[RMDB]
RNA sequence: GGGAACGACUCGAGUAGAGUCGAAAAGUAUGGGUAUUUAUAAGUAAAUGGAGAGUUGUAAUGACGAGAAGUUUACAAAGUAAUAUCUGUUCCCGUAUGGGAAUUUUUUCAAGUCCCGGAGUCUAUGCCGUUUAUACCUGUUCGCAGGUAUAAACGGAAAAGAAACAACAACAACAAC
Reactivity to 2A3 in 0.01 (KOAc 150mM, MgCl2 10mM, bicine 150mM(pH8.5), 24C), signal-to-noise 3, nucleotides 027 to 126: g070u050a160u250g000g000g020u000a010u000u100u000a070u020a020a010g010u010a000a000a020u010g040g000a100g040a050g040u000u000g080u210a160a090u260g030a000c000g010a020g000a300a000g020u000u000u000a000c030a000a120a000g050u040a000a020u000a000u020c000u000g040u000u010c030c000c000g010u110a110u140g030g000g100a000a050u120u080u030u030u110u160c090a140a020g000u000c000c000c000g000g070a020g020u000c020u070a070u160g060
Reactivity to DMS in 0.01 (KOAc 150mM, MgCl2 10mM, bicine 150mM(pH8.5), 24C), signal-to-noise 2, nucleotides 027 to 126: g000u030a050u060g000g000g010u000a010u030u000u000a060u020a040a300g000u010a020a010a000u010g010g030a240g020a180g000u000u010g000u010a140a110u040g000a000c000g000a050g020a300a280g010u000u000u000a010c010a000a090a090g010u000a020a020u000a000u020c010u010g020u010u010c000c020c010g020u020a090u040g020g000g010a000a020u000u000u020u020u010u020c120a090a140g000u000c010c010c000g030g000a070g010u000c030u010a030u040g010